[RMDB]
RNA sequence: GGGAACGACUCGAGUAGAGUCGAAAAGAUAUGGAUGUCAUAGGAGGCAACAGCUCGGAAACGAGACAUGCCUUCUAUACAUCCUAAGUCAAAUCUACUCUUGCCAGUUCGCUGGCAAGAGUAGAAAGAGUUGACAAUAGUUCGCUAUUGUCAACUCAAAAGAAACAACAACAACAAC
Reactivity to DMS in 0.01 (KOAc 150mM, MgCl2 10mM, bicine 150mM(pH8.5), 24C), signal-to-noise 3, nucleotides 027 to 126: g010a080u000a300u020g010g020a000u000g010u000c150a000u000a020g000g010a000g010g000c000a040a120c300a150g000c010u000c000g030g000a090a070a150c010g010a000g000a030c130a260u000g010c010c000u000u000c000u000a000u000a020c000a000u010c000c010u000a020a060g000u010c020a060a080a110u000c000u000a000c000u000c000u000u000g000c000c000a000g000u000u020c220g020c000u000g000g010c000a010a000g010a000g000u010a000g000a000a050a070
Reactivity to 2A3 in 0.01 (KOAc 150mM, MgCl2 10mM, bicine 150mM(pH8.5), 24C), signal-to-noise 2, nucleotides 027 to 126: g030a020u050a030u120g000g000a000u020g030u050c160a000u020a010g030g010a020g010g000c010a040a050c080a250g060c000u000c010g030g030a050a050a050c010g010a010g040a020c010a020u060g000c000c020u000u000c000u000a010u010a000c000a000u000c010c000u000a060a010g010u010c030a020a020a140u010c000u000a000c000u000c000u000u010g000c010c010a010g020u120u080c250g070c190u000g000g000c000a000a000g000a000g000u010a000g010a000a000a010

Structure probing data (DMS and 2A3) for a 177-nucleotide construct. 2A3 is a SHAPE reagent: it acylates the 2'-hydroxyl of flexible nucleotides of all four kinds. The reactions ran in a buffer of 150 mM KOAc, 10 mM MgCl2 and 150 mM bicine (pH 8.5), at 24 C. Source: RMDB library TTRDEL, as collected in RNAgym. For 2A3 the reverse transcriptase was SuperScript II with manganese.